[RMDB]
RNA sequence: GGGAACGACUCGAGUAGAGUCGAAAAACAUUGGCCUUCGGGCCAAUGUACUGGAAAUAAAGCCGAAAGGCUUCGCAUUCCUUAUUUGGCGAAAGCCUGCGAGAUUAUGUAAGUUCGCUUACAUAAAGCAGGUACUAUCAUUCGUGAUAGUACCUGCAAAAGAAACAACAACAACAAC
Reactivity to DMS in 0.01 (KOAc 150mM, MgCl2 10mM, bicine 150mM(pH8.5), 24C), signal-to-noise 1, nucleotides 027 to 126: a020c000a000u000u000g020g010c000c000u020u000c230g030g000g010c000c000a000a000u000g000u000a060c110u000g000g000a020a020a110u040a020a020a110g000c030c020g010a120a080a120g000g010c010u000u000c070g010c170a180u000u000c000c010u000u010a040u010u000u040g010g000c030g020a150a070a140g000c000c000u000g000c100g000a100g000a140u000u000a020u000g000u000a000a020g020u000u020c300g020c010u000u000a000c010a010u000a000a020a140
The record gives the reactivity of an RNA of 177 nucleotides to DMS. The RNA was probed in 150 mM KOAc, 10 mM MgCl2 and 150 mM bicine (pH 8.5) at 24 C. The data come from the RNA Mapping Database (RMDB), library M2PK50. The DMS profile rests on 1,067 reads.